An RNA of 207 nucleotides, treated with 2A3 and DMS and read out base by base. Conditions: 150 mM KOAc, 10 mM MgCl2 and 150 mM bicine (pH 8.5), 24 C. For DMS the reverse transcriptase was MarathonRT. 2A3 adducts were read by reverse transcription with SuperScript II with manganese. Source: RMDB library RNAMAK, as collected in RNAgym.
RNA sequence: GGGAACGACUCGAGUAGAGUCGAAAAGGGGUCAUAGAUCGAGUACGACGAGAGCUUGGAUUUAUGGACUGAAGCCUCCACGGUCCAUUGUCAGCUCGAGUCGUACUAAGACAGUCUAUGACGGAGGCACCCAAACUCGGUUCUUCGGAACCGAGAACCACCACAAUACGUUCGCGUAUUGUGGUGGAAAAGAAACAACAACAACAAC
Reactivity to 2A3 in 0.01 (KOAc 150mM, MgCl2 10mM, bicine 150mM(pH8.5), 24C), signal-to-noise 3, nucleotides 027 to 156: g060g030g000g000u000c010a000u000a010g010a020u060c010g010a020g000u020a000c010g010a000c030g020a020g000a020g080c090u290u300g080g000a080u160u300u120a000u030g000g000a010c000u000g020a060a040g000c010c000u000c000c010a030c020g000g020u020c010c010a020u000u030g010u030c130a100g020c000u000c000g010a000g010u010c000g000u000a000c000u010a000a000g000a000c000a000g010u000c000u010a000u000g000a000c000g000g000a000g000g000c000a040c010c000c000a030a110a100c000u000c010g000g030u010u000c020u020u080c230g080g020a000a000c010c000g000a020g000a000a030
Reactivity to DMS in 0.01 (KOAc 150mM, MgCl2 10mM, bicine 150mM(pH8.5), 24C), signal-to-noise 1, nucleotides 027 to 156: g000g000g010g010u000c020a020u000a010g010a060u020c020g020a040g010u020a020c020g070a050c000g000a300g000a010g060c000u000u000g000g000a060u010u010u000a020u000g000g020a210c010u010g010a020a070g010c010c020u010c000c000a300c070g010g000u000c000c010a110u000u110g020u000c050a160g000c020u000c010g000a300g020u000c010g040u000a030c000u000a060a100g000a070c300a050g010u010c010u000a050u000g010a020c030g050g020a060g000g030c020a200c010c000c020a050a120a280c000u010c000g010g000u000u010c000u000u030c300g070g000a040a000c000c000g020a020g060a020a120